[RMDB]
About this RNA
Conditions: 150 mM KOAc, 10 mM MgCl2 and 150 mM bicine (pH 8.5), 24 C. An RNA of 207 nucleotides, treated with DMS and 2A3 and read out base by base. For 2A3, 789 sequencing reads were counted. Reactivities are given for positions 27 through 156. For 2A3 the reverse transcriptase was SuperScript II with manganese.

RNA sequence: GGGAACGACUCGAGUAGAGUCGAAAAUAUAAGGAAGGUUUGGACAAGUAUCCCAUGAGUAGAGGCCAAGGUGAUGAGAAAAUCCUCUAAGGAAUUAUAGAAAGGCAUACAGACCAGGUGCUACUUCAUCCGAGGCUUGAGGGUUGAGUACCAGAUAGUAUAGUAGCAUGUUCGCAUGCUACUAUACAAAAGAAACAACAACAACAAC
Reactivity to DMS in 0.01 (KOAc 150mM, MgCl2 10mM, bicine 150mM(pH8.5), 24C), signal-to-noise 2, nucleotides 027 to 156: u020a170u000a060a120g000g040a090a110g050g030u000u000u000g030g010a130c060a110a170g050u000a080u000c000c030c040a160u040g020a120g030u020a150g010a080g030g000c050c060a030a130g040g040u020g000a100u010g020a090g000a070a080a080a150u000c070c090u010c060u000a060a060g020g000a060a060u000u020a080u000a080g020a070a010a030g000g040c000a160u000a100c060a120g020a120c040c060a060g000g010u010g000c060u010a050c060u000u000c030a050u000c000c020g000a150g030g000c040u010u000g020a130g040g000g030u000u010g000a150g020u000a020c040c010a120g020a070u010a030
Reactivity to 2A3 in 0.01 (KOAc 150mM, MgCl2 10mM, bicine 150mM(pH8.5), 24C), signal-to-noise 1, nucleotides 027 to 156: u200a000u020a030a000g090g030a030a070g040g000u030u090u090g020g000a020c050a070a040g010u050a090u050c050c020c070a080u140g000a000g010u110a080g010a010g000g000c020c000a000a020g000g000u000g040a060u060g000a030g050a040a090a000a040u050c040c000u030c100u060a020a000g010g010a030a030u070u030a080u060a040g030a100a020a000g020g000c010a040u070a140c040a010g090a000c000c020a000g000g020u020g080c020u020a130c000u020u070c010a010u000c010c070g020a080g060g070c100u040u060g040a010g060g000g000u020u080g040a010g000u040a040c000c000a010g020a090u090a000